[RMDB]
RNA sequence: GGGAACGACUCGAGUAGAGUCGAAAACUUAACUGGCCAGAUAAGAAAAGACCGAGAGGUUCAAGCUUAUAGGGCAGAAAGCGGGGGACAGCAGUGCUAAACAUUCCCUGUGGCUGAGACGAAGGUAAAAAGGGUCAUAACUUCGGUUAUGACCCAACAUAAUUGCGAGGUUCGCCUCGCAAUUAUGAAAAGAAACAACAACAACAAC
Reactivity to 2A3 in 0.01 (KOAc 150mM, MgCl2 10mM, bicine 150mM(pH8.5), 24C), signal-to-noise 1, nucleotides 027 to 156: c010u050u060a000a100c040u100g150g000c070c030a080g000a110u070a070a000g020a010a150a020a030g040a020c000c060g000a020g020a040g150g010u110u110c040a020a020g000c000u040u000a030u040a070g070g010g000c010a010g040a060a050a020g020c070g000g000g000g010g000a010c000a040g030c010a030g060u060g040c020u070a100a030a030c030a060u040u020c000c000c030u040g000u030g030g030c030u040g010a010g010a060c110g040a070a040g000g040u110a040a010a070a030a040g000g010g010u000c000a010u000a000a010c000u000u090c190g080g000u000u000a000u000g000a000c000c000c000a000a000
Reactivity to DMS in 0.01 (KOAc 150mM, MgCl2 10mM, bicine 150mM(pH8.5), 24C), signal-to-noise 1, nucleotides 027 to 156: c030u020u010a050a060c050u000g010g040c000c000a300g000a130u000a020a020g010a080a100a240a300g000a040c000c000g000a250g000a240g000g040u020u000c040a210a290g000c010u040u010a050u000a120g010g010g000c050a140g000a110a060a120g040c120g070g090g060g030g000a070c030a040g090c040a110g000u000g000c060u000a050a010a150c100a090u000u010c000c000c000u000g000u010g010g030c030u020g030a200g040a070c050g000a090a110g020g020u010a020a050a060a090a080g040g030g000u000c000a000u000a010a020c000u000u000c250g080g000u000u000a020u000g030a020c000c010c000a000a000

Structure probing data (2A3 and DMS) for a 207-nucleotide construct. Reactivities are given for positions 27 through 156. It was measured as part of the RMDB library M2RFPK. Conditions: 150 mM KOAc, 10 mM MgCl2 and 150 mM bicine (pH 8.5), 24 C.